[RMDB]
RNA sequence: GGGAACGACUCGAGUAGAGUCGAAAAGGCAAAGCCAAAUAUACCAAUUCCAAGUAAAAAAGUACUGCAAACAAUGCUCACCAACAGAGCAACGAACUGGAAGGCUUUUUUAAAAGAUAUUGAUGAGAGUGUAAAGUAGAUUCGUCUACUUUACACUAAAAGAAACAACAACAACAAC
Reactivity to DMS in 0.01 (KOAc 150mM, MgCl2 10mM, bicine 150mM(pH8.5), 24C), signal-to-noise 6, nucleotides 027 to 126: g010g020c080a080a100a120g010c030c030a060a070a110u010a090u000a090c040c010a050a070u000u010c010c030a080a120g010u000a000a020a020a040a030a040g000u000a060c010u000g010c050a060a110a140c040a040a300u000g000c000u000c000a110c160c130a060a130c300a120g000a010g020c010a010a020c300g000a050a110c190u000g020g010a110a050g000g000c000u000u000u000u010u000u010a040a060a230a100g000a040u010a030u000u010g010a040u000g000a180g000
Reactivity to 2A3 in 0.01 (KOAc 150mM, MgCl2 10mM, bicine 150mM(pH8.5), 24C), signal-to-noise 4, nucleotides 027 to 126: g040g000c050a140a080a040g010c010c010a020a090a010u200a010u050a070c030c000a020a010u060u000c030c020a090a040g070u060a010a020a010a020a010a000g040u060a200c010u030g050c040a030a050a040c000a020a060u020g000c000u010c010a100c050c010a060a110c050a100g010a000g010c000a000a020c010g010a060a030c060u060g040g070a020a000g000g020c000u070u020u010u010u000u020a050a080a010a000g050a010u200a050u180u150g080a100u130g040a050g010